The data come from the RNA Mapping Database (RMDB), library TTRDES. Chemical mapping of a 177-nucleotide RNA with DMS and 2A3. The 2A3 profile rests on 2,741 reads. The DMS profile rests on 1,734 reads.
[RMDB]
RNA sequence: GGGAACGACUCGAGUAGAGUCGAAAAGAUAUGGAGAUGGGCAACGAUAAGAUUCCUUCGGAAACGAAGGUAGAUCUUUUGACGUUGUCCCAUCUCCUAAGUCAAAACUCCAGUCUUCGGACUGGAGGUUUCAUCGCAUCUUCGGAUGCGAUGAAACAAAAGAAACAACAACAACAAC
Reactivity to DMS in 0.01 (KOAc 150mM, MgCl2 10mM, bicine 150mM(pH8.5), 24C), signal-to-noise 2, nucleotides 027 to 126: g000a080u010a300u000g010g000a000g010a000u000g000g010g020c000a020a020c010g040a200u010a020a010g000a000u000u010c000c000u000u010c010g000g000a120a070a240c010g000a000a000g000g030u000a060g010a030u000c000u000u000u000u000g030a160c100g010u010u000g000u000c000c000c010a000u000c000u000c010c000u000a020a070g000u000c050a090a080a140a300c000u000c000c000a030g000u000c000u000u020c230g020g000a000c000u000g000g000a010g000
Reactivity to 2A3 in 0.01 (KOAc 150mM, MgCl2 10mM, bicine 150mM(pH8.5), 24C), signal-to-noise 1, nucleotides 027 to 126: g000a000u040a030u140g000g000a000g000a000u010g020g010g010c020a000a000c030g060a110u060a210a010g000a000u060u130c000c000u000u000c020g020g020a060a050a050c010g000a010a010g040g040u000a070g040a020u000c030u010u060u070u200g260a070c060g000u020u000g000u000c000c000c000a010u020c000u010c000c000u000a000a000g020u000c010a000a000a070a100c000u030c000c000a010g000u030c010u040u250c300g130g010a000c000u000g020g020a000g020